[RMDB]
RNA sequence: GGGAACGACUCGAGUAGAGUCGAAAAGCGCUCGAUAUCCGCCUCGCUCGAGUAGGUUUCCCCGGGGAUCCCUCUUAGAGCACUUGCCACCAUACAGGUAAGUAACGUAGUGUAUUCCCCAGAGGGGCACUUUUUAUUUGAACUUCUGCAGGUUAAGCAUCUUGAUCAUGUUCGCAUGAUCAAGAUGAAAAGAAACAACAACAACAAC
Reactivity to 2A3 in 0.01 (KOAc 150mM, MgCl2 10mM, bicine 150mM(pH8.5), 24C), signal-to-noise 1, nucleotides 027 to 156: g100c120g030c050u070c130g190a140u040a090u160c090c000g000c000c000u000c000g010c020u000c000g010a000g000u050a080g170g000u080u000u050c010c010c010c010g000g000g020g000a000u000c000c040c000u000c000u100u110a050g000a010g080c030a010c010u040u020g040c010c010a100c010c020a060u260a300c020a200g040g010u060a060a020g010u140a180a000c050g050u020a040g000u010g030u050a180u090u080c060c000c000c000a010g070a000g000g010g010g000c000a010c000u140u000u090u230u300a160u190u170u090g050a020a030c000u060u000c030u130g050c040a070g090g080u140u030a000a000g080
Structure probing data (2A3) for a 207-nucleotide construct. The 2A3 profile rests on 431 reads. 2A3 adducts were read by reverse transcription with SuperScript II with manganese. The reactions ran in a buffer of 150 mM KOAc, 10 mM MgCl2 and 150 mM bicine (pH 8.5), at 24 C. The data come from the RNA Mapping Database (RMDB), library VIROID. Reactivities are given for positions 27 through 156.